[RMDB]
RNA sequence: GGGAACGACUCGAGUAGAGUCGAAAACGACGGGAACGAGUACGGGUCCGGCAGCAGCAGGUGCAAGUCGUGCGCGGUCCGGUCGAAGCGGUAACCGGUGAUCAGAGCGCCCGAGCCGGUGCGAACGGCGGUAUACGUGGUUCGCCACGUAUACCGCAAAAGAAACAACAACAACAAC
Reactivity to 2A3 in 0.01 (KOAc 150mM, MgCl2 10mM, bicine 150mM(pH8.5), 24C), signal-to-noise 2, nucleotides 027 to 126: c010g010a000c020g050g010g020a020a020c010g000a020g040u090a030c020g010g040g060u010c070c030g070g000c030a080g000c000a010g030c020a040g070g060u030g020c040a060a040g160u070c020g020u050g040c020g000c000g020g030u040c010c010g070g010u020c000g020a140a010g090c060g070g000u000a070a030c010c000g000g000u020g020a080u160c020a020g020a010g200c040g020c010c030c000g010a010g000c000c000g000g000u010g020c020g050a120a110c030g050
Reactivity to DMS in 0.01 (KOAc 150mM, MgCl2 10mM, bicine 150mM(pH8.5), 24C), signal-to-noise 2, nucleotides 027 to 126: c040g020a040c000g000g000g000a040a020c000g020a060g010u000a050c070g000g000g010u000c050c070g000g000c030a120g010c080a080g000c120a100g050g000u000g010c010a090a100g020u020c000g000u000g000c010g040c020g000g000u000c000c000g000g000u000c030g000a090a120g060c040g000g000u030a080a060c010c030g010g000u000g000a160u040c180a120g030a160g050c090g000c030c040c000g010a030g000c000c020g010g070u000g020c220g000a050a110c250g020

Source: RMDB library OK1LIB, as collected in RNAgym. Structure probing data (2A3 and DMS) for a 177-nucleotide construct. DMS adducts were read by reverse transcription with MarathonRT. For 2A3 the reverse transcriptase was SuperScript II with manganese. Reactivities are rounded to 0.1 and cut off at 0 and 3. The RNA was probed in 150 mM KOAc, 10 mM MgCl2 and 150 mM bicine (pH 8.5) at 24 C.